[RMDB]
RNA sequence: GGGAACGACUCGAGUAGAGUCGAAAACGUGGGCCCAGGUGUAUACCUGUUCUUCUAUUUCUUCGAUAAUAGCGGGGGUGAGUUCGUUGUCGCGGACCGCAGGGAACGCACGUGGUCCCAGUGGGACCUGUCCAAAGGGCUUCGGCCCUUUGGACAGAAAAGAAACAACAACAACAAC
Reactivity to DMS in 0.01 (KOAc 150mM, MgCl2 10mM, bicine 150mM(pH8.5), 24C), signal-to-noise 1, nucleotides 027 to 126: c060g000u010g000g030g020c050c010c010a020g010g020u000g000u010a110u000a160c030c010u010g010u000u010c050u010u000c020u000a020u010u010u010c110u010u020c160g020a170u010a010a050u000a020g000c120g000g000g000g040g030u000g000a070g010u000u020c030g010u010u010g010u010c200g040c010g020g000a100c020c020g030c050a040g000g000g000a140a150c210g010c030a040c080g000u000g010g020u000c000c000c000a110g020u000g000g000g010a080c130